[RMDB]
RNA sequence: GGGAACGACUCGAGUAGAGUCGAAAAAUGUCGAUUACACGCUGUGGCAGCGGGAAAUCCUCGGUGAUCUCGACGACAGCGACAGCCCGAUCGCCGCGCAGCUGGCCUACUGGGAAAAUGCGUUGGCGCUCGCAUGCCGAUUCGUCGGCAUGCGAGCAAAAGAAACAACAACAACAAC
Reactivity to 2A3 in 0.01 (KOAc 150mM, MgCl2 10mM, bicine 150mM(pH8.5), 24C), signal-to-noise 2, nucleotides 027 to 126: a000u030g080u150c020g020a010u030u060a180c040a000c150g030c000u090g030u100g070g060c020a070g000c070g010g020g000a100a180a000u010c000c180u260c130g050g030u080g040a080u050c000u000c000g300a300c010g020a020c030a000g070c000g000a090c020a000g020c000c060c080g000a060u060c090g010c000c100g000c000g080c000a060g020c060u150g140g000c020c000u220a230c120u060g000g000g000a100a190a000a000u030g060c020g030u150u080g010g000c000
An RNA of 177 nucleotides, treated with 2A3 and read out base by base. For 2A3, 448 sequencing reads were counted. 2A3 adducts were read by reverse transcription with SuperScript II with manganese. Values cover nucleotides 27 to 126. The data come from the RNA Mapping Database (RMDB), library OK1LIB. The reactions ran in a buffer of 150 mM KOAc, 10 mM MgCl2 and 150 mM bicine (pH 8.5), at 24 C.